[RMDB]
RNA sequence: GGGAACGACUCGAGUAGAGUCGAAAAAGUCGAAUGAAGAUGUCGUUGAAAUUCAGAGAGCGAAUAUCGCACAGCGUUUUGAUUGUGUACCAUCACAAUUAAAUUAUGUAAUCAAAACACGAUUCACUAAUCAUGGGACCUUCGGGUCCCAUGAUUAAAAAGAAACAACAACAACAAC
Reactivity to DMS in 0.01 (KOAc 150mM, MgCl2 10mM, bicine 150mM(pH8.5), 24C), signal-to-noise 1, nucleotides 027 to 126: a010g000u050c160g000a000a060u020g000a000a020g000a120u000g050u070c040g000u000u000g030a100a020a170u000u000c040a300g000a300g000a080g170c000g000a070a020u120a100u000c000g010c170a100c160a100g000c060g020u000u000u000u000g000a040u000u000g000u000g060u000a130c300c210a120u100c000a000c050a100a100u000u000a000a050a050u000u070a070u000g000u000a050a050u000c040a000a040a010a100c070a000c050g000a050u050u020c000a060c070